[RMDB]
RNA sequence: GGGAACGACUCGAGUAGAGUCGAAAAGUCGAGCCUGCCCCGACCCAUGCUAUUGCUGCCGCUGAGGUGAUAGCUGCAAUACUGGGGAGACCUUCUGAAGAUUGCCCAGCGUCAGUCAAGACUUGGAUCUGUAAAAGGAAUUCGUUCCUUUUACAGAAAAAGAAACAACAACAACAAC
Reactivity to 2A3 in 0.01 (KOAc 150mM, MgCl2 10mM, bicine 150mM(pH8.5), 24C), signal-to-noise 5, nucleotides 027 to 126: g010u010c010g010a020g030c020c050u060g030c020c020c000c000g040a050c000c000c010a030u070g010c030u100a060u150u070g010c010u010g010c000c010g010c030u040g030a070g070g040u030g020a030u050a050g050c020u030g010c020a050a090u060a220c080u080g000g010g020g000a040g030a040c010c010u110u080c030u080g060a110a060g040a100u020u050g010c000c010c010a010g000c000g030u010c010a020g030u100c050a050a030g020a090c030u040u050g050g010a050
Reactivity to DMS in 0.01 (KOAc 150mM, MgCl2 10mM, bicine 150mM(pH8.5), 24C), signal-to-noise 9, nucleotides 027 to 126: g010u000c020g000a110g010c010c020u000g010c060c010c010c030g020a120c090c020c010a060u010g000c060u000a070u000u000g010c000u000g010c040c030g000c030u000g010a160g020g010u000g010a030u010a080g020c050u010g010c110a070a080u000a080c120u010g010g000g010g010a170g000a120c040c020u000u000c070u000g010a100a100g010a070u000u000g010c010c000c010a040g000c030g010u000c010a020g010u010c070a050a070g000a100c050u000u000g000g010a220